This 177-nucleotide RNA was probed chemically with DMS and 2A3. For DMS the reverse transcriptase was MarathonRT. High DMS reactivity at an A or C suggests that its Watson-Crick edge is free.
[RMDB]
RNA sequence: GGGAACGACUCGAGUAGAGUCGAAAAAGUGUCGUGCAGCCUCCAGGCCCCCCCCUCCCGGGAGAGCCAUAGUAGUCUGCGGAACCGGUGAGUACACCGGAAUUGCCAGGACGACCGGGUCCUUUCCUAGUAUUCCAAAGUUCGCUUUGGAAUACUAAAAAGAAACAACAACAACAAC
Reactivity to DMS in 0.01 (KOAc 150mM, MgCl2 10mM, bicine 150mM(pH8.5), 24C), signal-to-noise 5, nucleotides 027 to 126: a070g010u020g000u000c020g020u010g000c030a050g000c030c010u010c030c080a130g000g000c000c010c000c010c010c010c010c070u000c070c070c060g020g000g010a050g000a110g020c020c000a090u020a070g010u010a070g010u000c010u000g000c050g010g000a110a100c010c000g000g010u000g010a300g010u040a120c040a010c000c000g000g010a020a010u030u030g010c040c030a230g020g000a030c010g000a070c060c080g000g000g010u010c030c050u000u000u010c020c020
Reactivity to 2A3 in 0.01 (KOAc 150mM, MgCl2 10mM, bicine 150mM(pH8.5), 24C), signal-to-noise 5, nucleotides 027 to 126: a000g140u110g010u040c050g040u050g020c010a010g010c000c000u010c030c020a020g000g020c000c010c000c000c000c010c010c020u050c030c030c000g000g010g000a090g010a010g010c000c000a020u050a040g030u010a010g010u000c020u020g020c010g030g000a030a030c000c000g010g020u030g010a210g130u190a100c010a000c010c000g000g040a030a080u090u080g050c010c010a030g040g020a000c000g010a010c010c000g020g000g000u040c010c000u010u030u010c010c000
The 2A3 profile rests on 9,787 reads. 2A3 adducts were read by reverse transcription with SuperScript II with manganese. The reactions ran in a buffer of 150 mM KOAc, 10 mM MgCl2 and 150 mM bicine (pH 8.5), at 24 C. It was measured as part of the RMDB libraries RFM100 and RFMREP.